[RMDB]
RNA sequence: GGGAACGACUCGAGUAGAGUCGAAAACUAGUGCCAUUCGUGGCACUAGAAGGGGUCCAGCCUGGAAAGGCUGGAGGUAUUGGAAUGGUCCGGCCGCCAUUCAAGGUACGCUAUUCGUAGCGUACAAUCAUGAAACGCAAUUCGUUGCGUUUCAUGAAAAAGAAACAACAACAACAAC
Reactivity to DMS in 0.01 (KOAc 150mM, MgCl2 10mM, bicine 150mM(pH8.5), 24C), signal-to-noise 3, nucleotides 027 to 126: c010u000a000g010u000g010c000c010a040u000u010c210g030u010g000g010c010a000c000u020a010g000a110a070g010g000g000g000u000c000c000a010g020c000c010u010g000g030a120a120a010g010g010c000u000g000g000a010g010g030u000a070u010u010g010g010a020a010u000g000g010u000c020c040g010g000c030c050g000c010c010a000u000u010c030a170a120g000g020u000a000c010g020c000u000a030u000u010c170g010u000a010g010c000g030u000a000c010a070a100
Reactivity to 2A3 in 0.01 (KOAc 150mM, MgCl2 10mM, bicine 150mM(pH8.5), 24C), signal-to-noise 3, nucleotides 027 to 126: c000u000a000g010u000g000c010c010a030u030u070c280g100u060g010g000c000a000c000u010a000g000a000a030g040g020g010g000u000c000c000a010g000c000c000u040g090g150a220a120a030g020g000c000u010g000g050a000g010g010u120a160u090u300g120g020a020a020u020g000g000u050c050c020g040g040c030c030g000c010c000a010u020u000c000a020a010g180g000u010a010c000g010c010u000a020u030u160c270g090u020a000g000c000g000u000a000c000a000a060